[RMDB]
RNA sequence: GGGAACGACUCGAGUAGAGUCGAAAACGACAGAACUUCGGUUCUGUCGAAAUAAAAUCAGCGGUUAAAAAGCUGGCGUUAUAACCCCUGAACGCCAGCUUAAAAGAUUCGUGUUCGCACGAAUCAAGCUUAAGGUAAUCUUCGGAUUACCUUAAGCAAAAGAAACAACAACAACAAC
Reactivity to 2A3 in 0.01 (KOAc 150mM, MgCl2 10mM, bicine 150mM(pH8.5), 24C), signal-to-noise 3, nucleotides 027 to 126: c010g000a000c000a000g000a010a020c010u090u130c230g060g000u000u000c000u010g020u000c010g010a000a000a000u050a000a070a010a090u110c040a030g070c040g080g080u130u140a150a180a120a030a040g000c000u010g000g000c000g000u000u000a120u060a220a130c000c000c010c020u010g020a000a000c000g010c010c000a000g000c000u010u000a000a000a000a020g000a000u000u000c000g000u000g040u040u080c220g020c050a000c000g000a000a000u010c000a000a020
Reactivity to DMS in 0.01 (KOAc 150mM, MgCl2 10mM, bicine 150mM(pH8.5), 24C), signal-to-noise 2, nucleotides 027 to 126: c020g030a020c010a010g000a010a000c000u000u010c120g030g000u000u000c000u000g000u000c000g020a000a060a040u010a060a040a090a070u000c070a060g010c090g010g010u000u000a040a100a140a060a020g010c000u000g000g010c000g000u010u000a060u010a130a230c100c000c000c030u010g000a030a010c000g000c000c010a010g020c000u000u000a020a050a070a060g000a020u000u000c000g020u000g020u000u010c180g020c010a000c000g020a000a000u000c010a070a120

Notes
This 177-nucleotide RNA was probed chemically with 2A3 and DMS. High 2A3 reactivity points to a flexible backbone, as in loops and unpaired stretches. The data come from the RNA Mapping Database (RMDB), library M2PK50. Conditions: 150 mM KOAc, 10 mM MgCl2 and 150 mM bicine (pH 8.5), 24 C. 2A3 adducts were read by reverse transcription with SuperScript II with manganese. The 2A3 profile rests on 4,088 reads.